[RMDB]
RNA sequence: GGGAACGACUCGAGUAGAGUCGAAAAAAGUGGCACAGAAGUAUGGCUUGGCUGUGGGCGAUCGCAUUGCUCUGCAAGUGAAAGGUGCGCCUACCACAGUAACCCUGGUGGGAUUGCUGACACCUGCAGACUUAAUCUUUUUCGAAAGAUUAAGUCUAAAAGAAACAACAACAACAAC
Reactivity to 2A3 in 0.01 (KOAc 150mM, MgCl2 10mM, bicine 150mM(pH8.5), 24C), signal-to-noise 4, nucleotides 027 to 126: a000a000g080u100g020g010c040a040c010a100g110a170a010g080u080a100u160g040g000c030u040u060g030g020c020u020g010u060g040g020g010c050g040a050u060c030g000c070a080u000u100g010c020u020c060u120g050c040a100a050g020u040g110a120a040a010g020g000u030g030c010g000c000c000u020a020c010c000a020c010a020g030u050a050a070c020c030c010u040g100g020u080g010g000g050a080u040u140g010c020u020g030a050c020a030c020c000u030g030c030
Reactivity to DMS in 0.01 (KOAc 150mM, MgCl2 10mM, bicine 150mM(pH8.5), 24C), signal-to-noise 8, nucleotides 027 to 126: a070a060g020u000g010g020c040a060c090a080g010a080a080g020u000a060u000g010g000c030u000u000g010g020c030u000g020u000g010g000g010c120g000a060u000c100g010c040a170u000u000g010c140u000c050u010g020c110a060a060g010u010g000a050a090a150g000g000u000g010c050g010c080c020u000a080c020c020a040c070a070g010u000a070a100c100c050c050u010g000g010u000g000g000g000a110u010u000g000c040u000g000a170c070a040c030c030u000g020c160